RNA sequence: GGGAACGACUCGAGUAGAGUCGAAAAGAUAUGGAGAGUCCAAGGGAGCUUAGUGAUCGGAAACGAUCACAGAGCGACGAUCUUGGCUCUCCUAAGUCAAACUAAACAGAGUUCGCUCUGUUUAGAACAUAACCAAUACGUUCGCGUAUUGGUUAUGAAAAGAAACAACAACAACAAC
Reactivity to DMS in 0.01 (KOAc 150mM, MgCl2 10mM, bicine 150mM(pH8.5), 24C), signal-to-noise 6, nucleotides 027 to 126: g000a020u000a160u010g000g000a020g010a020g010u010c010c010a010a000g010g000g000a040g020c000u000u000a150g020u000g010a010u000c000g020g000a040a030a100c010g010a010u000c010a000c000a300g010a010g020c010g000a070c300g000a030u000c000u000u010g000g000c000u000c000u000c000c000u000a000a040g000u000c010a140a150a260c010u000a000a010a010c000a010g010a030g020u000u030c300g020c010u000c000u000g000u000u000u000a010g000a120a250
Reactivity to 2A3 in 0.01 (KOAc 150mM, MgCl2 10mM, bicine 150mM(pH8.5), 24C), signal-to-noise 3, nucleotides 027 to 126: g000a000u030a000u090g000g000a000g000a000g030u080c030c020a010a000g020g010g010a080g000c010u020u060a070g020u010g010a000u000c010g000g020a040a020a010c000g000a000u000c010a000c010a010g030a000g000c010g100a170c040g020a020u010c000u000u000g010g010c000u000c000u000c000c000u010a000a010g000u000c010a030a070a110c010u010a000a000a000c010a000g020a000g040u150u150c230g110c100u010c010u010g010u000u000u000a010g010a010a000

Chemical mapping of a 177-nucleotide RNA with DMS and 2A3. DMS adducts were read by reverse transcription with MarathonRT.